[RMDB]
RNA sequence: GGGAACGACUCGAGUAGAGUCGAAAAGUGCCUUCUUCGGAAGGCACAAAAAAACCUUUGUGACCACAUCAGCAUCGAUCAAGAUUCAGGCCCAUUGGGCCUGACUUGGGAGCUGUUGUGGUCACUCUGGUAAAAAAGAUUGCCUUCGGGCAAUCAAGACAUUGGUUAGGUUCGCCUAACCAAUGUCAAAAGAAACAACAACAACAAC
Reactivity to 2A3 in 0.01 (KOAc 150mM, MgCl2 10mM, bicine 150mM(pH8.5), 24C), signal-to-noise 1, nucleotides 027 to 156: g000u000g000c010c020u000u010c030u070u090c210g150g000a000a000g010g050c020a020c000a000a000a000a000a000a000a000c000c030u000u000u010g000u000g000a000c000c000a000c000a000u010c010a000g010c020a240u200c070g130a110u070c000a030a000g030a030u300u030c010a000g000g020c000c000c020a240u240u300g020g000g010c000c000u000g000a010c000u010u000g000g000g020a010g000c000u020g000u000u010g000u000g000g000u000c000a010c000u000c000u000g000g000u080a040a000a000a000a000a080g000a010u000u000g000c000c000u030u110c280g090g000g050c000a000a000u000c010a000a030